RNA sequence: GGGAACGACUCGAGUAGAGUCGAAAAAGUACAGGUUUCAAACGAGGCCUUGAGUGAGAUCGUGAAAGUUCGCCGUCGGGCGAAUGGAAGCGAAAAGUCGACCCCAAGCUGAAAAGCGAAGGGUCGAAAUUUGUAUCAGGUUCGCCUGAUACAAAUUAAAAGAAACAACAACAACAAC
Reactivity to 2A3 in 0.01 (KOAc 150mM, MgCl2 10mM, bicine 150mM(pH8.5), 24C), signal-to-noise 8, nucleotides 027 to 126: a000g160u140a040c060a050g010g060u020u020u040c170a300a300a070c120g010a010g010g000c010c000u050u070g040a060g060u150g060a070g020a100u020c000g000u010g040a030a010a010g000u010u000c000g000c030c010g150u300c230g150g010g000c000g010a000a000u010g000g010a010a000g000c000g000a060a040a030a030g070u020c000g000a000c000c010c000c010a020a000g000c000u030g010a030a050a040a020g000c010g040a040a010g010g000g000u000c000g000a000
Reactivity to DMS in 0.01 (KOAc 150mM, MgCl2 10mM, bicine 150mM(pH8.5), 24C), signal-to-noise 9, nucleotides 027 to 126: a080g010u030a100c150a030g000g010u000u000u010c010a090a140a140c220g000a030g010g000c010c010u000u010g010a120g010u020g010a130g000a140u000c000g000u000g000a010a240a190g000u000u000c000g020c000c000g020u040c300g000g010g010c000g010a000a000u010g000g010a300a250g000c000g000a010a070a070a100g010u000c000g010a010c000c000c000c010a010a300g000c000u000g000a070a070a140a010g010c000g000a300a120g000g000g000u000c000g000a000